RNA sequence: GGGAACGACUCGAGUAGAGUCGAAAAUAUGUUCAUGAGGAUGUGCCUAUGAAUAGCUGGCAACAGCUUUUCGAGCUGAGAAACGGCCUAAAAGGGGUUAUAUUUGCCAUCGAUGAGAUACAAAAUGCUAGACGAGAGCAUUCGUGCUCUCGUCUAGAAAAGAAACAACAACAACAAC
Reactivity to DMS in 0.01 (KOAc 150mM, MgCl2 10mM, bicine 150mM(pH8.5), 24C), signal-to-noise 1, nucleotides 027 to 126: u020a000u000g010u000u000c020a030u040g080a030g030g000a190u000g090u040g030c050c000u060a070u020g000a000a020u020a000g020c060u050g000g010c290a170a170c000a000g000c000u000u000u010u090c100g010a020g070c020u000g000a050g010a040a020a110c150g050g030c000c000u020a010a050a060a100g000g050g040g050u000u030a090u010a050u060u000u000g000c000c020a010u010c070g000a050u010g000a120g000a140u010a050c090a000a050a110a050u060g030
Reactivity to 2A3 in 0.01 (KOAc 150mM, MgCl2 10mM, bicine 150mM(pH8.5), 24C), signal-to-noise 2, nucleotides 027 to 126: u190a010u080g050u050u020c000a030u140g190a010g070g130a040u150g060u250g280c000c000u120a040u040g020a050a000u060a000g030c000u000g010g000c040a020a010c000a000g000c010u090u010u000u090c010g050a010g020c000u050g030a030g190a110a000a010c080g080g010c000c120u220a050a050a050a000g170g090g000g000u000u100a110u000a010u140u090u110g010c040c000a060u070c010g010a080u110g020a030g010a070u030a030c090a010a230a040a020u250g060
Chemical mapping of a 177-nucleotide RNA with DMS and 2A3.
High 2A3 reactivity points to a flexible backbone, as in loops and unpaired stretches.
The RNA was probed in 150 mM KOAc, 10 mM MgCl2 and 150 mM bicine (pH 8.5) at 24 C.